[RMDB]
RNA sequence: GGGAACGACUCGAGUAGAGUCGAAAAAAUGUAAAUGAUCUGCAAGUAGUGGCGGAUCCUCCAAAGGUGAAGAGCGUUCCAGCUGCAUUGUACUGGUUUAGGAUGGCACUCUCAAAAACAGCAAGUGUAGGGGGUGAUACACCUGAGUGGAUCACCAAAAUAUCGUGGGAUUCGUCCCACGAUAUUUAAAAGAAACAACAACAACAAC
Reactivity to 2A3 in 0.01 (KOAc 150mM, MgCl2 10mM, bicine 150mM(pH8.5), 24C), signal-to-noise 4, nucleotides 027 to 156: a000a010u220g000u090a060a050a040u110g030a030u040c030u040g020c030a070a070g060u080a050g040u170g080g030c050g000g020a020u020c000c020u040c010c020a100a100a040g100g020u090g060a060a040g010a020g030c030g030u090u000c040c010a050g000c030u080g000c030a090u020u070g030u060a070c030u030g050g030u060u060u050a060g030g030a070u040g040g000c020a010c020u020c000u010c030a010a050a080a060a050c030a030g070c070a120a040g060u030g020u100a070g030g030g000g000g000u020g010a000u010a040c040a010c010c040u080g040a060g030u040g000g000a000u030c010a010c020c020a010
Reactivity to DMS in 0.01 (KOAc 150mM, MgCl2 10mM, bicine 150mM(pH8.5), 24C), signal-to-noise 3, nucleotides 027 to 156: a080a050u000g010u000a080a070a100u000g010a030u000c020u020g030c030a080a140g030u000a080g020u000g000g060c010g020g000a040u000c010c040u020c050c030a060a100a100g020g000u010g000a080a110g000a080g030c040g020u000u010c030c020a160g020c040u000g010c030a080u000u000g020u020a060c040u000g010g020u010u000u000a100g030g000a100u000g020g000c030a060c080u000c020u000c060a040a040a060a060a070c060a080g010c010a060a070g000u000g010u000a080g020g010g020g040g040u000g000a060u010a040c020a020c020c070u010g010a190g030u000g000g000a050u000c000a030c010c020a060

Structure probing data (2A3 and DMS) for a 207-nucleotide construct.
The data come from the RNA Mapping Database (RMDB), library OK3TST.
The RNA was probed in 150 mM KOAc, 10 mM MgCl2 and 150 mM bicine (pH 8.5) at 24 C.
For 2A3 the reverse transcriptase was SuperScript II with manganese.